RNA sequence: GGGAACGACUCGAGUAGAGUCGAAAAAAAGAAUGGAUUUUCACAUCUCUCAAACCUUGAUAAUUGAUGUUACUACAAAGAAUAGUCUUUGUAAGAAAGAUUAACAAGCAAGUGUAUACAGAUAGCAAAGGCAUUUAUUCACAUUCUUAGUUAAUAACGUGUGUAGAAUGUUCGCAUUCUACACACGAAAAGAAACAACAACAACAAC
Reactivity to 2A3 in 0.01 (KOAc 150mM, MgCl2 10mM, bicine 150mM(pH8.5), 24C), signal-to-noise 3, nucleotides 027 to 156: a000a000a010g050a020a000u050g010g050a070u020u060u120u220c060a060c050a090u010c050u030c020u050c080a100a080a180c040c020u020u040g060a060u080a200a010u050u070g020a020u090g080u080u060a050c050u000a010c020a020a080a010g000a050a110u060a300g010u010c000u020u020u020g030u020a010a050g050a070a040a000g020a060u020u100a050a000c020a030a040g110c020a050a050g020u020g010u130a020u060a140c050a010g110a060u080a000g020c060a110a040a000g030g040c020a010u020u110u090a090u130u100c030a020c000a110u060u040c010u030u070a090g060u140u120a110a050u260a220a080
Reactivity to DMS in 0.01 (KOAc 150mM, MgCl2 10mM, bicine 150mM(pH8.5), 24C), signal-to-noise 1, nucleotides 027 to 156: a080a060a050g000a080a040u020g000g000a300u000u010u000u000c090a160c080a050u000c040u000c030u000c080a110a130a000c050c010u000u000g020a110u000a100a140u000u000g000a080u000g030u000u010a220c030u000a040c000a030a010a030g070a100a300u000a220g040u000c040u000u010u010g040u000a060a130g000a080a100a220g000a040u000u010a060a010c020a030a110g000c060a050a100g010u000g040u000a090u000a260c110a050g020a070u010a150g040c070a030a030a110g000g000c040a070u020u000u000a070u030u000c010a010c040a030u000u000c020u000u000a100g000u000u000a030a140u000a070a190
This 207-nucleotide RNA was probed chemically with 2A3 and DMS. DMS adducts were read by reverse transcription with MarathonRT. The data come from the RNA Mapping Database (RMDB), library OK3TST. In probing experiments dimethyl sulfate is read out at A N1 and C N3, which are open when not base-paired. For 2A3, 950 sequencing reads were counted. The RNA was probed in 150 mM KOAc, 10 mM MgCl2 and 150 mM bicine (pH 8.5) at 24 C.